[RMDB]
RNA sequence: GGGAACGACUCGAGUAGAGUCGAAAAUCCUAAGUCGGAAGUCACCGUAGCGACAUGCUCGAGUAAAUUCGCUAUCGGAAACGAUAGCGACUAUAGCGAGCAACAGCGCUACGCAAGUCUUCCGAUAUGGAAAAACUAAGCGGUUCGCCGCUUAGAAGAUUUACGGACGGUUCGCCGUCCGUAAAUCAAAAGAAACAACAACAACAAC
Reactivity to 2A3 in 0.01 (KOAc 150mM, MgCl2 10mM, bicine 150mM(pH8.5), 24C), signal-to-noise 2, nucleotides 027 to 156: u050c000c010u050a100a030g020u000c020g000g030a010a000g020u030c000a020c230c010g000u000a010g000c000g110a180c020a120u040g000c000u000c010g060a080g110u110a020a090a080u080u000c000g000c000u000a000u010c000g030g070a070a030a050c000g000a000u010a010g000c000g000a000c000u110a090u190a050g050c020g000a000g030c000a010a030c110a050g060c020g000c000u000a000c000g000c010a050a230g000u000c000u000u020c000c000g000a000u010a040u020g000g000a070a100a000a000a000c000u010a000a010g030c000g010g060u050u100c300g050c040c010g010c000u000u000a000g000a000a010